[RMDB]
RNA sequence: GGGAACGACUCGAGUAGAGUCGAAAAUAGAUCCAACGCUCGCUAUUAUCUGUGGUGCCGCAAUGAAAGCAUACGUUUUCACAGAAAAGGUGAGGAAUAAGUAUUUGGAAUUAUUGCGGAGGGGCCAUAUUUUAGGCAGUUUCGACUGCCUAAAAUAAAAAGAAACAACAACAACAAC
Reactivity to 2A3 in 0.01 (KOAc 150mM, MgCl2 10mM, bicine 150mM(pH8.5), 24C), signal-to-noise 2, nucleotides 027 to 126: u070a010g100a040u020c000c000a050a000c050g070c050u020c030g010c070u020a040u300u010a050u300c080u040g020u000g050g000u040g030c020c000g000c050a040a020u040g060a100a010a080g100c000a020u050a060c040g000u080u010u000u010c010a010c000a020g260a070a140a000a030g090g020u020g020a010g050g080a020a080u170a240a060g030u070a080u080u160u160g000g040a060a050u040u000a020u000u050g010c040g010g020a060g010g040g050g010c010c000a010
Reactivity to DMS in 0.01 (KOAc 150mM, MgCl2 10mM, bicine 150mM(pH8.5), 24C), signal-to-noise 4, nucleotides 027 to 126: u010a070g010a100u000c040c040a100a100c150g020c020u000c020g010c030u000a070u010u000a090u000c060u000g000u000g010g010u000g020c040c030g020c050a040a030u000g010a060a080a160g030c080a070u010a040c100g010u010u000u010u000c000a020c010a070g000a080a070a100a250g010g000u000g000a020g010g000a030a070u010a080a120g010u000a050u000u000u000g020g020a070a160u000u010a010u000u000g010c020g000g010a120g030g010g000g000c060c050a060
This 177-nucleotide RNA was probed chemically with 2A3 and DMS. Reactivities are rounded to 0.1 and cut off at 0 and 3. Source: RMDB library OK2TST, as collected in RNAgym. For DMS, 3,522 sequencing reads were counted.